Structure probing data (DMS and 2A3) for a 207-nucleotide construct. Reactivities are given for positions 27 through 156.
RNA sequence: GGGAACGACUCGAGUAGAGUCGAAAACCUACCCAAGGUGAAAGCUCCUUCUCUCGCAAUGUGUAACUCAUGAUUCUCAUGACCCCUGAUUGGAGAGAUCCGGACUAGGAGCCAGGGGGCCUCUGAUAAAGCCAGACGCACUUCGGUGCGUCUGGAACAAAUAUGUAUGCUUCGGCAUACAUAUUUGAAAAGAAACAACAACAACAAC
Reactivity to DMS in 0.01 (KOAc 150mM, MgCl2 10mM, bicine 150mM(pH8.5), 24C), signal-to-noise 1, nucleotides 027 to 156: c020c020u000a180c010c010c020a080a120g020g000u040g000a150a080a070g000c040u000c000c010u000u010c000u000c010u000c020g040c060a040a050u000g000u000g000u000a070a010c010u060c010a040u000g000a170u000u010c210u000c020a070u000g000a060c000c000c010c030u000g000a120u010u030g030g000a050g000a100g000a070u010c050c000g050g000a140c070u000a040g020g000a050g020c020c010a100g000g040g010g040g020c000c060u000c030u000g040a170u000a050a080a180g000c010c000a010g000a010c000g010c000a000c000u000u000c300g050g020u000g040c030g030u000c000u000g000g000a010a050
Reactivity to 2A3 in 0.01 (KOAc 150mM, MgCl2 10mM, bicine 150mM(pH8.5), 24C), signal-to-noise 2, nucleotides 027 to 156: c000c000u000a050c020c000c010a090a060g000g000u060g060a190a120a010g010c050u000c000c000u040u050c050u000c000u040c010g120c160a040a070u080g070u040g030u150a090a050c010u000c020a020u030g040a140u300u020c210u080c110a020u040g040a090c000c000c000c030u080g050a040u000u060g030g000a010g010a000g010a020u060c130c110g020g050a040c040u120a080g010g060a010g000c030c020a030g000g010g000g010g010c000c010u050c050u090g160a180u130a110a130a020g060c000c000a000g000a010c000g000c000a020c000u040u070c180g060g010u010g020c000g000u000c000u000g000g000a000a000